Background:
Structure probing data (DMS and 2A3) for a 177-nucleotide construct. The reactions ran in a buffer of 150 mM KOAc, 10 mM MgCl2 and 150 mM bicine (pH 8.5), at 24 C. For 2A3 the reverse transcriptase was SuperScript II with manganese. For 2A3, 15,901 sequencing reads were counted. DMS adducts were read by reverse transcription with MarathonRT.
RNA sequence: GGGAACGACUCGAGUAGAGUCGAAAAACAGUUCAUCAUCAGGAACUCAAGGCAGUAAUCUGGAGGCUGGAAGUGAAGAGGGGCCGUGGAGGGACACUCUAGCUGGCUUGCUCUCCAAGCUUUGCUCUAGCUAGUAUACAUUCGUGUAUACUAGCUAAAAAGAAACAACAACAACAAC
Reactivity to DMS in 0.01 (KOAc 150mM, MgCl2 10mM, bicine 150mM(pH8.5), 24C), signal-to-noise 9, nucleotides 027 to 126: a090c100a060g010u000u000c030a070u000c090a100u010c130a110g000g010a050a050c050u000c070a070a070g010g010c050a060g010u010a070a070u000c120u000g000g010a040g010g010c030u000g010g010a190a060g020u010g010a070a090g010a040g010g010g010g010c030c040g020u000g010g000a100g010g000g000a070c110a060c030u000c030u000a170g010c040u000g010g010c020u000u000g010c080u010c040u000c040c020a050a110g000c050u000u000u010g010c080u000c140
Reactivity to 2A3 in 0.01 (KOAc 150mM, MgCl2 10mM, bicine 150mM(pH8.5), 24C), signal-to-noise 6, nucleotides 027 to 126: a000c020a020g020u040u020c010a090u020c010a040u040c040a120g050g080a030a040c020u020c090a050a070g070g000c020a020g050u100a070a100u070c050u060g020g020a000g040g000c020u030g020g030a050a040g040u030g050a110a020g010a030g020g020g040g000c030c030g040u070g060g100a110g000g030g040a030c030a020c070u020c010u010a040g040c030u040g080g030c000u010u040g030c020u030c000u010c110c000a030a030g010c000u060u080u090g030c010u030c020